[RMDB]
RNA sequence: GGGAACGACUCGAGUAGAGUCGAAAAGCAUACGUUACAUUAUCUGUGUUCGUAUGCGGUAAGCAACACAGAUAAUGUAAGCUUACCACCGUACGGUGGACAUGCGAAAGCAUGUCCAUCGUACGGAGCAGCAUGUAGCGUUCGCGCUACAUGCUGCAAAAGAAACAACAACAACAAC
Reactivity to 2A3 in 0.01 (KOAc 150mM, MgCl2 10mM, bicine 150mM(pH8.5), 24C), signal-to-noise 2, nucleotides 027 to 126: g000c020a040u090a200c130g090u030u020a000c000a000u000u000a020u010c000u010g020u020g020u040u130c100g140u210a140u220g070c030g020g070u180a080a000g000c020a010a000c000a000c000a000g000a030u010a010a000u010g000u000a000a000g000c000u000u040a050c000c010a000c000c000g000u000a000c000g000g000u000g000g000a000c000a000u000g000c010g040a080a050a010g000c000a000u000g000u000c000c000a000u000c000g000u000a000c000g000g000a000